Source: RMDB library RFM100, as collected in RNAgym. This 177-nucleotide RNA was probed chemically with DMS and 2A3.
[RMDB]
RNA sequence: GGGAACGACUCGAGUAGAGUCGAAAAGAAAGACAAUUUCUUGGGGCCCAAUUCUGCUCUUAUUGAAAUCAGUGAGAGUUCUGCCAUUGACUUAAAUAGGAGCAGAAUUGGGACCUAAGAAGAGAAACUUCUGAAGUUUUUUCGAAAACUUCAGAAGAAAAGAAACAACAACAACAAC
Reactivity to DMS in 0.01 (KOAc 150mM, MgCl2 10mM, bicine 150mM(pH8.5), 24C), signal-to-noise 1, nucleotides 027 to 126: g010a080a110a100g030a200c030a040a080u000u010u000c000u000u000g000g000g000g010c000c000c010a000a000u000u000c000u020g010c010u000c000u020u000a010u000u010g000a150a300a110u000c000a000g020u000g000a140g000a180g070u030u010c120u010g080c040c010a020u000u010g000a050c020u020u020a110a020a000u000a000g010g000a000g020c000a010g010a000a030u000u000g000g000g000a000c000c000u000a000a000g030a000a030g000a110g020a270a060a080
Reactivity to 2A3 in 0.01 (KOAc 150mM, MgCl2 10mM, bicine 150mM(pH8.5), 24C), signal-to-noise 4, nucleotides 027 to 126: g040a020a100a010g070a030c030a060a100u020u000u020c000u010u010g010g000g020g030c000c000c000a010a000u000u000c000u000g000c000u000c000u000u000a000u000u010g010a020a020a020u010c000a000g010u010g040a280g010a060g240u240u110c100u210g080c000c000a000u010u000g000a000c010u070u230a020a000a000u000a000g000g000a000g000c000a000g000a000a000u000u000g000g000g000a000c000c010u000a000a000g000a000a000g010a000g000a040a060a010
The RNA was probed in 150 mM KOAc, 10 mM MgCl2 and 150 mM bicine (pH 8.5) at 24 C.